[RMDB]
RNA sequence: GGGAACGACUCGAGUAGAGUCGAAAAUAAAGUUGAAGACAUUCUAGCGCUGGAUAUCGCUCUACCACGUAAUGAAGAGCAGUGGUUUGAAACUCUACCACCUGAAAUAGACCAAUGUCUGGUUGCCUGAAGAGUAGUCAUUCGUGACUACUCUUCAAAAAGAAACAACAACAACAAC
Reactivity to 2A3 in 0.01 (KOAc 150mM, MgCl2 10mM, bicine 150mM(pH8.5), 24C), signal-to-noise 2, nucleotides 027 to 126: u080a000a090a030g060u050u050g150a070a000g050a060c020a080u080u000c050u040a020g000c000g040c050u040g000g020a040u020a020u140c030g000c040u020c000u010a030c000c110a040c030g060u060a010a140u220g050a070a000g010a000g020c000a010g010u020g040g000u040u080u090g120a070a020a010c010u010c010u020a040c020c030a040c070c000u060g070a070a080a080u060a050g040a010c030c000a030a030u100g020u020c010u010g060g040u070u110g030c000c030
Reactivity to DMS in 0.01 (KOAc 150mM, MgCl2 10mM, bicine 150mM(pH8.5), 24C), signal-to-noise 3, nucleotides 027 to 126: u000a080a080a080g020u000u000g010a140a090g010a070c070a030u020u010c080u010a120g020c050g020c070u000g000g010a110u000a040u000c070g020c060u010c040u000a080c050c060a100c070g010u000a090a070u010g030a060a060g000a050g020c050a080g020u000g010g000u000u010u020g000a100a070a070c080u000c020u000a050c010c020a060c020c050u010g010a080a070a110u010a050g010a080c050c070a040a070u010g000u000c060u000g000g020u000u000g020c060c090
Background
An RNA of 177 nucleotides, treated with 2A3 and DMS and read out base by base. The reactions ran in a buffer of 150 mM KOAc, 10 mM MgCl2 and 150 mM bicine (pH 8.5), at 24 C. The DMS profile rests on 2,783 reads.